[RMDB]
RNA sequence: GGGAACGACUCGAGUAGAGUCGAAAAGAGUGAUGUUCAGCUUGGUGCGCCAACUGGUACUGUUAUUACAAUAGGCACGGAGUCAGAAAUGGAUGAGCGCAAACGCGGCCCUGUUGAAAAGGUUGCACCUCGGAUGACAUUUCGAUGUCAUCCGAGGAAAAGAAACAACAACAACAAC
Reactivity to DMS in 0.01 (KOAc 150mM, MgCl2 10mM, bicine 150mM(pH8.5), 24C), signal-to-noise 1, nucleotides 027 to 126: g010a090g020u000g010a010u010g010u050u020c040a090g040c030u000u000g000g020u000g050c050g000c020c020a070a160c080u000g020g050u010a060c090u010g020u000u020a090u010u020a070c170a070a100u010a120g000g010c030a010c080g020g040a130g000u050c000a040g020a050a080a100u000g000g020a080u000g020a080g010c040g020c080a030a020a070c140g000c010g020g000c050c000c060u010g010u000u010g000a080a060a100a090g010g000u000u010g000c050a100

The data come from the RNA Mapping Database (RMDB), library OK2TRN. Structure probing data (DMS) for a 177-nucleotide construct. The RNA was probed in 150 mM KOAc, 10 mM MgCl2 and 150 mM bicine (pH 8.5) at 24 C. The DMS profile rests on 840 reads.